[RMDB]
RNA sequence: GGGAACGACUCGAGUAGAGUCGAAAAAGUCCACGUUUAUAGUUGCUGAGCCUUGUUUGAUUUGUGGACGCUCAGUCUUCCUUUUCUGGCGAAAGCCAGUUUAGGCAGCAAGCCGAACCCAGCUCGUAGCAGUAACCUAGAGGCUUGCGCUACGUUAGCAUGAGCUAAUAUUCGUAUUAGCUCAUGCAAAAGAAACAACAACAACAAC
Reactivity to 2A3 in 0.01 (KOAc 150mM, MgCl2 10mM, bicine 150mM(pH8.5), 24C), signal-to-noise 2, nucleotides 027 to 156: a010g040u020c010c000a040c010g010u060u080u200a260u140a100g070u080u150g010c020u060g050a020g010c000c030u150u090g060u150u130u190g160a240u140u150u150g040u050g000g000a010c010g000c010u020c050a000g070u030c000u020u040c000c000u000u020u020u070c000u010g000g000c010g030a120a050a030g000c010c000a000g010u000u000u040a030g000g000c000a000g020c010a010a030g020c030c030g020a060a050c000c010c010a010g000c000u020c050g030u020a000g040c070a040g000u030a000a060c040c030u090a090g050a100g130g000c000u010u010g000c030g000c030u040a020c020g090u090u130a000
Reactivity to DMS in 0.01 (KOAc 150mM, MgCl2 10mM, bicine 150mM(pH8.5), 24C), signal-to-noise 1, nucleotides 027 to 156: a140g010u010c020c020a090c020g000u020u000u010a090u000a150g010u010u010g000c030u000g020a100g030c000c030u000u040g000u000u000u000g010a160u010u000u020g050u000g010g000a070c020g010c040u010c040a130g020u000c020u010u000c020c000u000u000u000u010c010u010g060g010c020g000a160a150a300g000c000c000a010g040u010u000u000a020g000g050c120a070g010c070a030a060g000c000c000g000a080a190c030c020c000a290g010c040u000c000g040u000a080g000c000a200g040u000a030a090c040c020u010a110g010a300g010g000c070u000u000g020c110g020c000u010a020c030g010u000u020a140
Chemical mapping of a 207-nucleotide RNA with 2A3 and DMS. For DMS the reverse transcriptase was MarathonRT. 2A3 adducts were read by reverse transcription with SuperScript II with manganese. Conditions: 150 mM KOAc, 10 mM MgCl2 and 150 mM bicine (pH 8.5), 24 C.